Conditions: 150 mM KOAc, 10 mM MgCl2 and 150 mM bicine (pH 8.5), 24 C. The record gives the reactivity of an RNA of 207 nucleotides to 2A3 and DMS. For 2A3, 1,892 sequencing reads were counted. It was measured as part of the RMDB library OK3TST.

RNA sequence: GGGAACGACUCGAGUAGAGUCGAAAAACAUCGUCGACCCGCUCGACUUCGAGACGCUGUUCGCCGAGCGCAAGGCGCGCCUCGUGUCGCUGUAUCCGCCCGAGCACCAGGCGGAAAUCGCCGCGACGCUCGCGCUCGAAUCCGAGCCCGUGACGCGAAAACAAAUAGCUUUCGAGCUAUUUGUUUUAAAAGAAACAACAACAACAAC
Reactivity to 2A3 in 0.01 (KOAc 150mM, MgCl2 10mM, bicine 150mM(pH8.5), 24C), signal-to-noise 3, nucleotides 027 to 156: a000c010a080u100c000g040u000c020g090a100c030c040c010g000c010u000c000g020a030c040u020u010c000g010a010g060a210c040g040c120u140g060u180u170c080g020c140c060g060a040g010c060g010c120a100a150g110g020c030g000c010g020c040c030u110c040g050u050g010u020c010g000c040u020g030u050a090u010c030c020g020c000c030c030g090a080g090c060a080c100c040a010g000g010c010g000g000a040a020a030u090c060g000c020c010g010c010g020a020c000g020c030u030c060g010c030g000c000u000c010g000a000a010u020c030c030g000a020g000c000c060c030g090u100g000a000c000g000c040g090
Reactivity to DMS in 0.01 (KOAc 150mM, MgCl2 10mM, bicine 150mM(pH8.5), 24C), signal-to-noise 1, nucleotides 027 to 156: a060c030a110u000c030g020u000c000g020a190c070c030c040g000c050u000c000g000a060c070u010u000c010g020a100g000a140c040g030c030u000g030u000u000c060g040c040c060g010a080g040c000g010c060a090a140g010g030c010g060c080g000c050c010u000c080g040u000g030u000c040g020c020u010g010u000a210u000c060c000g050c010c020c000g020a170g030c110a210c080c020a100g010g040c020g000g020a030a010a050u000c000g020c000c020g020c020g040a100c000g000c020u000c050g030c030g000c020u000c000g000a040a030u000c040c030g020a020g010c010c020c000g040u000g020a030c060g010c040g000
Values cover nucleotides 27 to 156. 2A3 adducts were read by reverse transcription with SuperScript II with manganese.